[RMDB]
RNA sequence: GGGAACGACUCGAGUAGAGUCGAAAAGAUAUGGAAUUAAAUUCCUUGGACCGGAUAACCACUCGGAAACGAGUGGCUAAUACGCUAGGAAGUUAAUUCCUAAGUCAAACGCACGUUCGCGUGCGAAGACAUUAGACUGGUUCGCCAGUCUAAUGUCAAAAGAAACAACAACAACAAC
Reactivity to 2A3 in 0.01 (KOAc 150mM, MgCl2 10mM, bicine 150mM(pH8.5), 24C), signal-to-noise 2, nucleotides 027 to 126: g050a000u050a010u180g000g000a010a000u000u010a030a010a040u040u020c010c040u030u070g130g040a220c140c080g000g010a010u010a030a010c000c000a010c000u010c000g010g040a070a090a040c010g020a010g000u000g020g020c010u010a030a010u130a030c010g000c040u040a000g040g000a020a000g010u010u020a010a000u010u040c010c000u000a120a020g050u010c020a140a010a050c010g020c000a010c020g020u040u050c300g000c010g110u010g000c000g030a030a020
Reactivity to DMS in 0.01 (KOAc 150mM, MgCl2 10mM, bicine 150mM(pH8.5), 24C), signal-to-noise 2, nucleotides 027 to 126: g000a040u030a300u020g010g000a040a000u000u000a000a020a050u000u000c010c000u020u000g020g000a140c300c060g010g000a050u000a080a080c000c010a010c010u000c000g000g010a120a050a110c000g010a000g010u000g000g000c010u000a070a070u000a150c030g000c080u000a010g030g020a010a020g000u000u000a000a000u000u000c000c000u020a040a110g000u000c020a080a090a180c050g020c000a010c030g040u000u010c220g040c010g030u010g010c000g000a060a070
Source: RMDB library TTRDEL, as collected in RNAgym. The record gives the reactivity of an RNA of 177 nucleotides to 2A3 and DMS. High 2A3 reactivity points to a flexible backbone, as in loops and unpaired stretches. The reactions ran in a buffer of 150 mM KOAc, 10 mM MgCl2 and 150 mM bicine (pH 8.5), at 24 C.